[RMDB]
This 207-nucleotide RNA was probed chemically with 2A3 and DMS. Conditions: 150 mM KOAc, 10 mM MgCl2 and 150 mM bicine (pH 8.5), 24 C.
RNA sequence: GGGAACGACUCGAGUAGAGUCGAAAACUGAUGGCGCAGCGCACCUACGCCGAGACGAUGAACACCAUCACGCACGAGCUGGCGCACGCGCUGGUCGGCCCCGACCACGGGCAUGAUGCCGUGUGGGCGCGCAAGCACCGCGAGCUGGGCGGCGACGACAGGUAGUCUGUUUCGACAGACUACCUGUAAAAGAAACAACAACAACAAC
Reactivity to 2A3 in 0.01 (KOAc 150mM, MgCl2 10mM, bicine 150mM(pH8.5), 24C), signal-to-noise 2, nucleotides 027 to 156: c040u100g040a040u180g040g000c040g010c020a020g000c060g000c040a060c040c030u170a050c130g030c090c010g040a010g030a040c040g090a100u000g020a130a030c090a130c130c050a060u080c030a040c060g070c020a030c070g060a060g050c010u100g080g000c000g020c010a090c110g000c010g000c000u040g010g060u000c000g070g000c000c000c020c000g080a090c000c030a000c010g010g000g020c090a040u190g020a070u120g100c050c030g030u100g010u000g110g040g020c030g000c030g000c060a120a040g050c040a140c080c010g020c000g030a020g000c060u110g000g010g010c020g000g030c040g030a010c020g020
Reactivity to DMS in 0.01 (KOAc 150mM, MgCl2 10mM, bicine 150mM(pH8.5), 24C), signal-to-noise 1, nucleotides 027 to 156: c040u000g020a110u030g000g000c010g050c040a070g040c000g040c040a030c050c030u010a030c040g010c010c010g060a020g000a300c070g020a180u010g000a090a150c200a140c130c020a040u000c100a150c040g020c030a300c030g000a140g000c000u010g000g020c020g000c020a140c060g010c020g020c020u000g000g020u000c040g020g000c030c010c020c000g050a120c010c050a070c030g000g000g070c010a100u000g030a100u000g020c040c010g000u020g060u000g010g000g000c000g000c020g010c070a160a100g000c060a100c030c010g020c010g010a130g030c040u000g000g000g010c000g010g040c010g010a200c020g050